[RMDB]
RNA sequence: GGGAACGACUCGAGUAGAGUCGAAAAGAUAUGGACUAGGCAAGCCAUUUGGUCGGAAACGACCAAAUGGUGAUGACCCUAGGUCCUAAGUCAAACCGUUUAUCUACGUUCGCGUAGAUAAACGGAAGAUGUGAAUAGUGUUCGCACUAUUCACAUCAAAAGAAACAACAACAACAAC
Reactivity to DMS in 0.01 (KOAc 150mM, MgCl2 10mM, bicine 150mM(pH8.5), 24C), signal-to-noise 9, nucleotides 027 to 126: g000a040u010a300u010g000g010a130c000u000a010g000g000c020a110a230g010c000c000a010u000u000u000g000g010u000c010g010g000a070a080a140c000g010a010c000c000a000a000a000u000g000g010u000g010a020u010g010a180c300c000c010u000a010g010g010u000c000c000u000a040a100g010u000c030a080a120a160c000c000g000u000u000u000a000u000c000u000a010c010g010u000u010c230g010c020g020u000a010g000a010u000a000a000a000c010g000g000a010a030
Reactivity to 2A3 in 0.01 (KOAc 150mM, MgCl2 10mM, bicine 150mM(pH8.5), 24C), signal-to-noise 5, nucleotides 027 to 126: g020a000u070a020u140g010g000a000c000u000a000g000g010c020a060a070g030c000c000a000u010u000u000g010g000u010c000g010g040a100a060a060c010g000a000c000c020a000a020a000u010g000g010u030g000a020u030g010a010c030c000c000u010a040g060g140u050c000c000u020a110a020g050u040c060a070a050a090c010c000g000u000u000u000a010u010c000u000a020c010g020u030u060c300g000c000g130u000a000g000a000u000a000a000a000c000g000g000a000a020